This 177-nucleotide RNA was probed chemically with DMS and 2A3. It was measured as part of the RMDB library OK1LIB. The 2A3 profile rests on 604 reads.
RNA sequence: GGGAACGACUCGAGUAGAGUCGAAAACUGCUAACUACCAAGACACUAUUGGCCGCCUGCAGGAUGAGAUUCAGAACAUGAAGGAAGAAAUGGCUCGUCACCUUCGGGAGUACCAGGACCUGCUGAAUAUAAGUGACACCUUCGGGUGUCACUUAUAAAAAGAAACAACAACAACAAC
Reactivity to DMS in 0.01 (KOAc 150mM, MgCl2 10mM, bicine 150mM(pH8.5), 24C), signal-to-noise 2, nucleotides 027 to 126: c030u050g010c050u030a030a060c090u000a140c070c010a030a050g020a050c080a110c060u000a170u000u000g010g010c020c060g020c020c020u000g040c060a060g020g000a100u010g060a050g010a040u020u010c050a090g000a100a210c160a050u020g000a010a160g000g000a120a080g010a040a150a080u030g010g000c020u000c100g040u000c080a130c020c050u000u000c010g000g000g000a070g020u010a060c100c010a130g000g000a110c020c000u000g010c020u020g000a120a220
Reactivity to 2A3 in 0.01 (KOAc 150mM, MgCl2 10mM, bicine 150mM(pH8.5), 24C), signal-to-noise 2, nucleotides 027 to 126: c020u070g020c000u100a070a050c000u010a090c000c000a050a000g020a050c080a010c060u070a120u070u040g030g000c010c020g010c010c000u030g000c060a020g040g090a040u070g000a050g030a030u000u180c030a050g050a230a120c010a080u140g050a050a020g170g010a070a080g130a010a210a000u110g060g030c050u000c000g090u050c000a030c020c010u000u080c000g030g070g000a030g020u030a090c000c020a000g050g080a060c000c010u040g000c010u040g080a060a000